[RMDB]
RNA sequence: GGGAACGACUCGAGUAGAGUCGAAAAGCCAUGAGUUUCGACUCAUGGCAAAAGCGCGUCAGCGCUACGAUGCAAGCGCAAGCGCGUCCAACGUAAAUGACAAAAUUCUCGGGUUCGCCCGAGAAAAUCUUCAUUCGUAGUUCGCUACGAAUGAAGAAAAAGAAACAACAACAACAAC
Reactivity to DMS in 0.01 (KOAc 150mM, MgCl2 10mM, bicine 150mM(pH8.5), 24C), signal-to-noise 2, nucleotides 027 to 126: g000c000c000a010u000g000a000g000u020u000u000c180g020a040c000u000c000a010u010g030g000c020a010a030a060a110g020c020g010c000g020u000c100a300g000c010g000c000u000a020c160g020a110u000g000c120a170a070g010c010g010c010a060a240g030c010g000c010g020u000c020c010a150a160c190g010u000a040a120a080u010g010a080c150a110a100a060a160u000u010c000u000c020g000g030g010u010u000c190g000c000c000c000g000a000g000a010a000a040a040
Reactivity to 2A3 in 0.01 (KOAc 150mM, MgCl2 10mM, bicine 150mM(pH8.5), 24C), signal-to-noise 2, nucleotides 027 to 126: g020c000c010a000u010g010a010g010u040u030u200c160g040a020c010u000c000a010u000g000g000c000a020a000a000a000g000c000g000c010g080u100c050a050g010c020g000c000u030a010c030g190a140u240g030c140a050a030g000c030g030c000a010a010g000c010g000c010g000u070c020c010a060a030c040g160u180a070a110a150u170g070a040c080a020a120a030a060u040u010c010u000c000g000g010g040u000u070c220g080c030c000c080g000a000g000a010a000a000a000
The record gives the reactivity of an RNA of 177 nucleotides to DMS and 2A3. 2A3 adducts were read by reverse transcription with SuperScript II with manganese. For 2A3, 1,482 sequencing reads were counted. For DMS, 874 sequencing reads were counted. It was measured as part of the RMDB library M2PK50.